[RMDB]
RNA sequence: GGGAACGACUCGAGUAGAGUCGAAAACUGGUGAUCGCGAUAUCCGAUUCGCUAUCCACUUGAAAACUGAUUGCUUGGUCGUCCGCCGUGACGAUGGCGAAGCGUCGAUAUUCGAUGCAGUCGAUCCGCAUUUACUGGAUUUCGAUCCAGUAAAUGCAAAAGAAACAACAACAACAAC
Reactivity to 2A3 in 0.01 (KOAc 150mM, MgCl2 10mM, bicine 150mM(pH8.5), 24C), signal-to-noise 9, nucleotides 027 to 126: c020u030g020g050u080g060a040u020c020g000c030g030a010u030a070u120c090c090g050a130u040u030c000g000c000u010a010u060c080c050a020c010u050u080g080a090a060a080a080c080u110g030a070u140u190g020c030u030u060g080g000u030c010g000u010c010c030g090c090c070g160u210g030a030c060g040a050u050g070g000c070g030a050a010g010c000g020u020c020g030a040u030a110u170u110c010g000a020u060g050c040a010g010u030c000g030a060u010c030c030
Reactivity to DMS in 0.01 (KOAc 150mM, MgCl2 10mM, bicine 150mM(pH8.5), 24C), signal-to-noise 3, nucleotides 027 to 126: c080u020g000g010u010g000a020u000c070g000c100g000a020u010a060u050c100c120g010a120u020u020c000g040c000u000a070u000c060c060a080c020u010u020g000a100a110a090a090c110u010g000a080u010u010g020c010u000u020g000g020u000c030g000u030c010c040g000c090c230g000u000g000a070c120g020a030u010g000g060c030g000a040a050g010c000g010u010c050g000a060u060a050u010u020c020g040a120u020g010c050a100g010u000c020g020a070u030c050c100